Structure probing data (DMS and 2A3) for a 177-nucleotide construct. The reactions ran in a buffer of 150 mM KOAc, 10 mM MgCl2 and 150 mM bicine (pH 8.5), at 24 C.
RNA sequence: GGGAACGACUCGAGUAGAGUCGAAAACGGACCCGCUGCUGUUUGUUCACGCCGGACUGCAGGUCAUCAACCUCGGGUUGGUGUUUCGGUUUUCCGAGGUUGUCGUGUAUGCGGCGCUAGGGGGUGCCGCAUGGCGGCUAUUCGUAGCCGCCAUGCGAAAAGAAACAACAACAACAAC
Reactivity to DMS in 0.01 (KOAc 150mM, MgCl2 10mM, bicine 150mM(pH8.5), 24C), signal-to-noise 1, nucleotides 027 to 126: c090g030g030a130c020c010c020g010c020u000g020c040u010g010u020u010u030g000u000u020c000a130c120g010c060c050g000g000a040c060u000g000c030a020g000g010u000c050a060u020c070a020a010c020c000u000c020g020g030g000u000u000g020g010u010g010u000u010u000c000g010g000u000u010u010u030c020c020g010a050g000g000u020u010g000u020c070g040u010g000u010a030u010g020c030g010g000c010g000c030u000a080g020g010g000g000g010u000g010c070
Reactivity to 2A3 in 0.01 (KOAc 150mM, MgCl2 10mM, bicine 150mM(pH8.5), 24C), signal-to-noise 3, nucleotides 027 to 126: c050g070g050a030c020c000c050g060c050u020g000c000u000g020u060u210u060g060u050u200c010a000c050g010c060c010g000g000a030c020u030g000c030a030g100g080u090c040a060u070c000a020a010c010c010u030c070g060g000g050u040u060g060g030u080g090u080u130u130c100g070g010u000u020u100u000c000c000g010a030g030g020u030u040g020u010c040g010u020g010u030a040u230g020c030g010g010c030g020c040u040a060g000g040g010g000g060u040g040c050

For DMS the reverse transcriptase was MarathonRT. The 2A3 profile rests on 1,654 reads. For DMS, 4,645 sequencing reads were counted. It was measured as part of the RMDB library OK1LIB.